Chemical mapping of a 177-nucleotide RNA with 2A3 and DMS. For 2A3 the reverse transcriptase was SuperScript II with manganese. The 2A3 profile rests on 3,142 reads. The reactions ran in a buffer of 150 mM KOAc, 10 mM MgCl2 and 150 mM bicine (pH 8.5), at 24 C.

RNA sequence: GGGAACGACUCGAGUAGAGUCGAAAAUUGACAUGAGGGAUUGUUACCUUGGUAAAAAAACAAUGAAAGGUAGCAAUGAUAUCCUUUAUGAGAGACCUGGGUGGAAUGCUAACCUGGGCGUGCUACCCACUUACAAAGACUUCGGUCUUUGUAAGUGAAAAGAAACAACAACAACAAC
Reactivity to 2A3 in 0.01 (KOAc 150mM, MgCl2 10mM, bicine 150mM(pH8.5), 24C), signal-to-noise 3, nucleotides 027 to 126: u060u070g010a020c020a030u000g010a000g020g000g000a030u020u070g010u020u000a010c010c000u040u020g050g070u250a060a090a090a110a010a020a030c130a060a050u180g130a100a010a000g000g000u010a000g040c000a000a040u070g010a030u030a040u060c000c020u000u030u050a060u040g060a130g000a000g010a090c020c010u040g000g000g030u020g020g070a200a130u140g080c060u040a040a100c020c030u030g010g040g000c030g020u050g020c000u030a030c010c000
Reactivity to DMS in 0.01 (KOAc 150mM, MgCl2 10mM, bicine 150mM(pH8.5), 24C), signal-to-noise 5, nucleotides 027 to 126: u000u010g010a300c040a010u000g000a020g000g010g010a030u000u000g010u000u000a010c000c000u010u000g010g010u020a010a000a060a080a070a050a100c170a120a120u020g000a060a010a010g000g020u000a000g000c010a040a050u020g010a130u000a100u000c010c000u000u000u000a010u010g010a300g010a100g000a080c030c020u000g000g000g020u000g020g010a290a040u000g010c070u000a050a080c130c120u000g010g010g010c020g020u010g000c080u000a070c010c010